[RMDB]
An RNA of 207 nucleotides, treated with DMS and 2A3 and read out base by base. The RNA was probed in 150 mM KOAc, 10 mM MgCl2 and 150 mM bicine (pH 8.5) at 24 C. Reactivities are given for positions 27 through 156. 2A3 is a SHAPE reagent: it acylates the 2'-hydroxyl of flexible nucleotides of all four kinds.

RNA sequence: GGGAACGACUCGAGUAGAGUCGAAAAAUACAUACUGACACCGGUUGCUCAACAGGCUGUGUGGGACGAUAGAAUAACAAGGCUGUCAAUUUGAGCUUGACGGCUGCAAACCGAAUGGAGUGAAAUCGUAACCGGACUCACUUCGGUGAGUCCGGAAACUAAACCUAAAGUUCGCUUUAGGUUUAGUAAAAGAAACAACAACAACAAC
Reactivity to DMS in 0.01 (KOAc 150mM, MgCl2 10mM, bicine 150mM(pH8.5), 24C), signal-to-noise 2, nucleotides 027 to 156: a080u000a050c050a120u000a180c020u000g000a090c010a080c020c040g030g020u000u000g000c040u010c050a130a140c090a080g000g020c000u010g030u000g090u000g010g020g010a070c050g020a140u000a060g020a080a080u020a030a110c050a050a260g010g000c020u000g010u000c000a020a040u000u010u000g000a100g020c300u000u000g010a060c010g000g070c020u000g020c100a040a110a130c040c020g000a070a180u010g010g030a120g050u000g000a070a080a100u000c040g020u000a100a170c010c010g010g030a020c010u010c050a010c010u000u000c280g010g000u000g000a020g020u000c000c000g020g020a000a010
Reactivity to 2A3 in 0.01 (KOAc 150mM, MgCl2 10mM, bicine 150mM(pH8.5), 24C), signal-to-noise 2, nucleotides 027 to 156: a000u150a020c060a020u120a040c030u070g080a000c000a050c040c020g090g000u040u070g020c040u040c080a010a130c020a050g070g010c000u030g030u020g060u090g080g040g010a010c040g010a030u110a090g110a030a110u100a050a020c060a070a000g050g000c000u000g000u000c000a000a000u120u070u220g030a040g010c000u010u010g010a010c010g020g030c010u020g000c020a050a000a090c040c000g040a060a060u090g020g030a010g040u040g030a040a060a080u110c040g010u010a080a040c000c010g000g000a000c000u000c000a000c000u030u040c190g020g010u000g000a000g000u020c000c000g000g000a000a000
Background:
2A3 adducts were read by reverse transcription with SuperScript II with manganese.